[RMDB]
The record gives the reactivity of an RNA of 207 nucleotides to 2A3.
Values are in units of 0.01, from 0 to 300, in steps of 10.
The reactions ran in a buffer of 150 mM KOAc, 10 mM MgCl2 and 150 mM bicine (pH 8.5), at 24 C.
Reactivities are given for positions 27 through 156.
RNA sequence: GGGAACGACUCGAGUAGAGUCGAAAAAGGGAAGAAAAUAAUUUAGAAAGGAGAUUCCGCCCCAGCUUGCGGUGCGGCCGAAAGGCAGUAAGGCAUCCCGGAGAGGGGAGGCAAGGCGAAAGCCAAAAACGGUACACCAUCUUCGGAUGGUGUACAAGUGUAUUUUUAGCUUCGGCUAAAAAUACACAAAAGAAACAACAACAACAAC
Reactivity to 2A3 in 0.01 (KOAc 150mM, MgCl2 10mM, bicine 150mM(pH8.5), 24C), signal-to-noise 2, nucleotides 027 to 156: a000g060g020g020a050a030g040a030a120a050a060u180a060a150u200u210u120a140g040a070a060a040g040g040a050g010a050u080u020c010c000g000c020c010c000c000a050g090c070u090u120g120c080g030g000u050g010c060g020g000c020c010g040a040a010a000g010g020c000a000g030u080a030a020g050g000c020a050u060c040c010c000g000g010a050g010a000g000g020g000g000a000g000g000c030a040a020g000g000c050g020a060a020a010g000c020c010a010a070a000a020a070c110g020g000u000a000c000a000c000c000a000u000c000u000u030c050g050g000a000u000g020g000u000g000u000a000c010a000a000